This 207-nucleotide RNA was probed chemically with 2A3 and DMS. For DMS, 2,013 sequencing reads were counted. It was measured as part of the RMDB library RSTRND. DMS adducts were read by reverse transcription with MarathonRT. The RNA was probed in 150 mM KOAc, 10 mM MgCl2 and 150 mM bicine (pH 8.5) at 24 C.
[RMDB]
RNA sequence: GGGAACGACUCGAGUAGAGUCGAAAAUGGCAACACCGUCAAAUUGCGGGAACAUCCUAAGAGCUAUCGACCACCAAGCAGGCUGCUGAAAGGCGUCUGUGGCCGGAUUAACGACUCCGGGUAAGGUAACAGCGUCGGUAGAUGAAGCUUCCCUGACCAUGCCUUGAAUGUUCGCAUUCAAGGCAUGAAAAGAAACAACAACAACAAC
Reactivity to 2A3 in 0.01 (KOAc 150mM, MgCl2 10mM, bicine 150mM(pH8.5), 24C), signal-to-noise 3, nucleotides 027 to 156: u120g030g020c090a090a060c050a100c110c000g050u080c050a060a210a250u230u230g020c030g000g000g040a040a030c020a090u100c050c020u070a110a030g010a010g090c000u000a010u000c010g000a010c010c010a000c030c070a030a000g010c000a000g010g000c020u180g000c000u010g250a070a020a030g070g000c000g000u010c000u000g020u040g000g000c020c000g000g020a020u100u080a090a110c040g030a050c030u010c000c000g000g020g000u070a140a030g000g000u000a030a010c000a000g000c010g040u000c000g000g010u010a000g000a020u090g030a030a000g030c010u010u000c000c000c000u010g020a010c010
Reactivity to DMS in 0.01 (KOAc 150mM, MgCl2 10mM, bicine 150mM(pH8.5), 24C), signal-to-noise 1, nucleotides 027 to 156: u000g000g050c030a030a100c050a300c010c020g020u000c050a050a130a150u000u000g010c100g030g020g020a140a100c060a030u000c020c050u000a010a160g000a130g010c030u010a070u000c000g020a060c010c000a070c050c000a170a210g010c010a010g000g010c000u030g010c010u020g020a160a140a190g000g020c000g000u000c000u000g020u010g000g000c000c000g030g000a120u000u000a040a070c020g000a100c270u000c020c020g000g000g010u010a050a130g010g010u000a090a070c070a010g020c130g040u000c010g080g020u010a040g000a070u000g020a110a150g000c050u000u010c020c000c000u000g010a060c170